An RNA of 177 nucleotides, treated with 2A3 and DMS and read out base by base.
For 2A3 the reverse transcriptase was SuperScript II with manganese.
DMS adducts were read by reverse transcription with MarathonRT.
For DMS, 8,675 sequencing reads were counted.
Values cover nucleotides 27 to 126.
Conditions: 150 mM KOAc, 10 mM MgCl2 and 150 mM bicine (pH 8.5), 24 C.
For 2A3, 10,411 sequencing reads were counted.
RNA sequence: GGGAACGACUCGAGUAGAGUCGAAAAUGGUGGCCUACGCGAUCCUGACCGUCCCCGCGACCAUCGGUGCUGUCGCGGCGUGGCGCAGUCACCAGAAGGUCAAGCAGACGCACUACGAGAUCACCAAAUUAUCGGUAGAGUUCGCUCUACCGAUAAUAAAAGAAACAACAACAACAAC
Reactivity to 2A3 in 0.01 (KOAc 150mM, MgCl2 10mM, bicine 150mM(pH8.5), 24C), signal-to-noise 6, nucleotides 027 to 126: u080g020g000u010g000g000c000c010u050a060c070g020c020g060a110u080c010c020u040g050a050c010c050g050u040c010c000c000c000g020c030g000a010c000c020a070u130c080g080g040u100g030c060u090g070u140c020g000c010g020g050c090g070u190g040g000c020g010c050a020g070u100c020a010c010c000a020g060a080a030g010g020u040c020a020a020g020c010a020g030a040c020g010c050a030c050u180a080c080g050a010g030a150u030c010a010c040c000a030a080
Reactivity to DMS in 0.01 (KOAc 150mM, MgCl2 10mM, bicine 150mM(pH8.5), 24C), signal-to-noise 7, nucleotides 027 to 126: u010g010g010u010g010g010c040c020u010a110c080g010c090g010a080u010c080c050u000g000a100c110c040g000u000c010c040c030c070g000c110g010a020c040c070a100u000c100g000g010u000g000c060u000g000u010c030g010c010g020g010c200g020u010g020g020c010g010c050a040g000u010c020a020c040c030a120g030a060a060g020g010u000c010a070a150g020c070a080g000a040c040g000c050a070c070u010a110c110g010a100g010a100u000c020a070c020c020a040a130